[RMDB]
RNA sequence: GGGAACGACUCGAGUAGAGUCGAAAAUUGGAGGCUGGUGUAAGGCGAUGUGGGUGAAGGCAGGAGGCUGAUGGAAAGACUGGGGGGAAGAAAAGCCGAAAUGGAUUCACGGUGCCUUGGAUGAAGGCUAAGAUCAACGUUUCGACGUUGAUCUUAGAAAAGAAACAACAACAACAAC
Reactivity to DMS in 0.01 (KOAc 150mM, MgCl2 10mM, bicine 150mM(pH8.5), 24C), signal-to-noise 5, nucleotides 027 to 126: u040u010g010g010a100g010g020c040u020g000g020u000g020u020a080a100g000g020c080g010a080u020g000u030g010g020g020u010g000a100a090g010g010c070a060g000g030a080g000g010c060u010g000a070u030g020g010a070a080a090g000a120c080u000g020g010g010g020g000g000a060a090g000a070a060a090a090g010c020c020g010a050a070a070u010g010g010a100u010u000c080a090c070g000g000u000g020c010c030u000u000g000g010a110u020g010a060a050g020g010
Reactivity to 2A3 in 0.01 (KOAc 150mM, MgCl2 10mM, bicine 150mM(pH8.5), 24C), signal-to-noise 5, nucleotides 027 to 126: u080u040g060g000a030g020g020c060u020g030g050u070g060u080a080a050g020g020c060g030a090u090g030u120g070g000g020u050g040a050a010g070g050c010a010g000g040a010g030g020c040u010g020a120u090g040g030a080a070a000g020a030c040u050g000g000g000g000g020g010a060a010g050a010a060a020a010g020c010c030g040a040a010a040u140g030g030a040u030u090c060a040c100g010g010u060g000c010c010u010u000g040g010a060u080g060a060a000g060g000
Structure probing data (DMS and 2A3) for a 177-nucleotide construct. Reactivities are given for positions 27 through 126. The 2A3 profile rests on 4,415 reads. The reactions ran in a buffer of 150 mM KOAc, 10 mM MgCl2 and 150 mM bicine (pH 8.5), at 24 C.